[RMDB]
RNA sequence: GGGAACGACUCGAGUAGAGUCGAAAAGGGAAGCCCCGCGCCAACAGGUCGUCCAGCCCGUGGGGCAGCUCCUCGAACAGCCGGCGGAACAGCUCCAGACCGACUUGCGGCAGCCAGGCCAGGGCAAGAGGUAUAAAAUAUUCGUAUUUUAUACCUCAAAAGAAACAACAACAACAAC
Reactivity to DMS in 0.01 (KOAc 150mM, MgCl2 10mM, bicine 150mM(pH8.5), 24C), signal-to-noise 7, nucleotides 027 to 126: g000g010g010a200a220g010c020c000c000c020g010c040g020c070c050a090a090c160a080g010g010u000c070g010u010c040c060a130g000c020c090c030g010u000g000g000g000g020c010a040g010c080u000c010c010u000c070g010a090a130c110a100g000c050c020g010g010c080g000g000a080a080c120a100g010c070u010c030c020a100g010a120c050c030g010a050c060u000u010g000c070g000g010c050a070g010c030c040a070g010g000c040c030a060g010g000g000c100a090a110
Reactivity to 2A3 in 0.01 (KOAc 150mM, MgCl2 10mM, bicine 150mM(pH8.5), 24C), signal-to-noise 4, nucleotides 027 to 126: g030g010g020a080a010g010c010c000c000c000g000c000g000c010c010a140a140c050a110g030g080u090c040g030u010c030c020a020g020c020c000c000g030u030g000g000g000g020c010a010g020c000u030c000c010u040c030g030a060a020c010a030g070c030c010g030g000c050g030g020a060a040c010a060g030c020u000c020c000a050g030a120c020c020g030a050c020u040u080g020c030g040g000c020a010g020c010c000a010g000g010c010c010a020g030g000g000c030a050a030
Structure probing data (DMS and 2A3) for a 177-nucleotide construct. The RNA was probed in 150 mM KOAc, 10 mM MgCl2 and 150 mM bicine (pH 8.5) at 24 C. Reactivities are given for positions 27 through 126.